[RMDB]
RNA sequence: GGGAACGACUCGAGUAGAGUCGAAAAGAGGAAUCCAAUCAUUCAAUUGGGUGAAAAGCCACCAAAAAGCGCCGCCCAUCAGCACGAUAUUCAUGAGUAAAGGAAGAAUAACGAAACGCCGGAUGCCUUUACCCUAGUUCUUCGGAACUAGGGUAAAAAAAGAAACAACAACAACAAC
Reactivity to 2A3 in 0.01 (KOAc 150mM, MgCl2 10mM, bicine 150mM(pH8.5), 24C), signal-to-noise 3, nucleotides 027 to 126: g080a000g030g070a040a020u020c000c010a000a020u040c060a100u150u050c040a050a130u040u080g020g000g030u050g060a040a030a080a070g020c010c000a020c000c010a050a130a030a080a040g060c040g010c000c020g010c050c030c000a050u060c040a000g040c000a000c040g020a040u050a020u080u060c050a020u140g110a020g060u180a090a090a000g040g020a010a080g050a020a080u070a100a010c050g040a150a030a000c030g010c030c020g040g020a010u080g040c010c010
Reactivity to DMS in 0.01 (KOAc 150mM, MgCl2 10mM, bicine 150mM(pH8.5), 24C), signal-to-noise 2, nucleotides 027 to 126: g040a170g000g000a150a050u010c000c020a010a000u000c210a100u020u010c160a050a040u020u000g000g020g020u030g010a030a110a070a100g020c020c020a090c020c050a020a080a050a090a110g020c060g000c050c010g030c020c000c010a080u000c020a090g000c080a070c030g000a090u010a010u000u030c100a010u020g000a190g000u020a030a080a050g000g000a120a060g000a090a060u000a010a080c080g010a020a160a110c130g000c040c050g000g000a030u040g000c020c020